[RMDB]
RNA sequence: GGGAACGACUCGAGUAGAGUCGAAAACACGUGACCAGCGUCACCCACGCGAUCCGCCGGCUGGAGGCCGAUGGAUUGGUGCGGCGGGUUCCGCACCCCACCGACGGGCGGACCACACUGGUGCAGAUACAAAGACCAAUUUCGAUUGGUCUUUGUAAAAAGAAACAACAACAACAAC
Reactivity to DMS in 0.01 (KOAc 150mM, MgCl2 10mM, bicine 150mM(pH8.5), 24C), signal-to-noise 7, nucleotides 027 to 126: c140a080c090g010u000g010a070c010c010a040g010c020g010u010c140a180c030c000c010a110c090g020c040g000a020u000c010c000g040c020c000g010g010c030u000g020g010a150g030g010c030c010g000a020u000g010g000a080u010u000g020g010u000g000c070g020g010c100g020g010g010u010u010c010c000g010c010a100c030c000c030c050a070c110c120g010a080c190g000g000g010c010g010g010a030c020c020a290c090a080c030u000g000g010u000g020c070a100g000a260
Reactivity to 2A3 in 0.01 (KOAc 150mM, MgCl2 10mM, bicine 150mM(pH8.5), 24C), signal-to-noise 7, nucleotides 027 to 126: c070a020c040g090u090g110a040c010c010a000g000c010g090u080c030a060c020c010c010a040c030g220c030g030a080u010c010c000g010c000c010g080g030c040u130g210g130a120g260g040c030c010g040a030u050g010g010a010u030u080g040g010u030g010c070g020g000c050g070g120g000u180u040c010c000g010c040a280c000c010c010c010a140c020c070g120a140c060g020g020g000c000g000g000a000c000c000a040c000a010c000u020g010g010u130g060c020a010g020a120

An RNA of 177 nucleotides, treated with DMS and 2A3 and read out base by base. The reactions ran in a buffer of 150 mM KOAc, 10 mM MgCl2 and 150 mM bicine (pH 8.5), at 24 C. For DMS the reverse transcriptase was MarathonRT. Reactivities are given for positions 27 through 126. It was measured as part of the RMDB library OK2TRN.